[RMDB]
An RNA of 177 nucleotides, treated with DMS and 2A3 and read out base by base. The RNA was probed in 150 mM KOAc, 10 mM MgCl2 and 150 mM bicine (pH 8.5) at 24 C.
RNA sequence: GGGAACGACUCGAGUAGAGUCGAAAAGUAUAUCUCAAACGACUACGGUUUACUCCAAAUUCAUUGGCUAGUUGAGGCCAAGAAACACCUGAUUUUUUUAAUGCUAAAUUUCUAGCUUAUCUUCAUAUCCGUUAAGAGAUUUCGAUCUCUUAACGGAAAAAGAAACAACAACAACAAC
Reactivity to DMS in 0.01 (KOAc 150mM, MgCl2 10mM, bicine 150mM(pH8.5), 24C), signal-to-noise 2, nucleotides 027 to 126: g000u060a150u020a080u010c020u000c040a080a120a150c070g000a080c090u000a030c140g000g010u000u000u010a130c050u000c030c020a010a110a060u010u020c030a050u000u010g040g000c050u000a050g010u000u030g040a190g050g010c000c000a030a020g000a060a070a130c180a070c070c010u000g000a000u000u000u000u000u020u030u060a070a020u060g010c010u000a010a140a140u010u030u000c110u000a010g000c010u000u000a030u000c090u020u000c060a060u010a100
Reactivity to 2A3 in 0.01 (KOAc 150mM, MgCl2 10mM, bicine 150mM(pH8.5), 24C), signal-to-noise 2, nucleotides 027 to 126: g030u020a040u030a100u210c030u020c030a100a110a020c080g110a050c050u110a030c110g020g040u020u040u080a100c010u000c050c020a010a100a050u110u030c060a080u030u020g000g000c010u000a030g080u120u070g090a070g090g000c010c010a000a020g010a000a030a000c020a020c010c020u060g140a260u020u010u010u030u020u090u230a060a060u120g000c000u010a010a040a260u160u210u060c040u020a010g000c000u040u100a100u080c020u050u020c020a020u020a040